[RMDB]
RNA sequence: GGGAACGACUCGAGUAGAGUCGAAAAUGAGCACAUAUGUUGGUACCCGAAAGAUGGUGAACUAUGCCUGAGUAGGGUGAAGCCAGGGGAAACUCUGGUGGAAGCUCGUAGCGAUUCUGACGUGCAACACCCUUGAUGACUUCGGUCAUCAAGGGUGAAAAGAAACAACAACAACAAC
Reactivity to DMS in 0.01 (KOAc 150mM, MgCl2 10mM, bicine 150mM(pH8.5), 24C), signal-to-noise 1, nucleotides 027 to 126: u000g010a110g030c000a140c050a000u000a060u040g030u000u030g000g060u030a140c000c000c010g040a150a160a160g000a050u030g000g040u000g000a180a050c210u000a200u000g050c000c000u000g010a190g000u000a180g000g030g000u000g010a280a300g000c000c000a000g000g000g000g000a080a180a190c000u000c000u000g000g040u000g000g000a050a150g050c000u000c030g000u000a090g000c030g000a080u060u000c000u000g010a100c100g000u000g000c060a140a240